[RMDB]
RNA sequence: GGGAACGACUCGAGUAGAGUCGAAAAGAUAUGGAAAGCGCCGGUGAAAUACUGGAGAGGCUUAUCGGAAACGAUAAGACCUCGAUGAAAGGAGCUUUCCUAAGUCAAAGGACGCUUCGGCGUCCAAGUAAUUAUAGUAGUUCGCUACUAUAAUUACAAAAGAAACAACAACAACAAC
Reactivity to DMS in 0.01 (KOAc 150mM, MgCl2 10mM, bicine 150mM(pH8.5), 24C), signal-to-noise 4, nucleotides 027 to 126: g000a010u000a030u020g000g000a030a010a000g010c000g020c010c020g030g000u010g010a150a120a130u010a080c180u000g010g020a120g010a000g000g000c010u000u000a000u000c000g010g000a010a010a030c000g000a010u000a000a000g000a120c000c000u000c010g000a080u010g010a070a150a170g010g010a030g010c010u000u000u000c000c000u000a000a080g000u000c010a060a130a160g000g000a010c020g030c010u000u010c180g010g010c000g020u000c000c010a000a070
Reactivity to 2A3 in 0.01 (KOAc 150mM, MgCl2 10mM, bicine 150mM(pH8.5), 24C), signal-to-noise 3, nucleotides 027 to 126: g000a000u000a010u030g010g020a000a000a000g010c020g010c000c030g070g070u220g130a290a300a120u300a300c190u260g090g050a080g010a000g060g000c030u020u010a010u000c010g000g010a020a000a000c020g010a000u010a030a020g240a300c000c000u000c000g050a090u070g040a000a050a010g000g000a020g000c000u000u000u000c000c000u000a000a000g000u000c010a030a180a170g020g000a000c020g010c010u030u100c300g170g000c020g000u000c000c000a000a010
An RNA of 177 nucleotides, treated with DMS and 2A3 and read out base by base. The reactions ran in a buffer of 150 mM KOAc, 10 mM MgCl2 and 150 mM bicine (pH 8.5), at 24 C. It was measured as part of the RMDB library TTRDEL.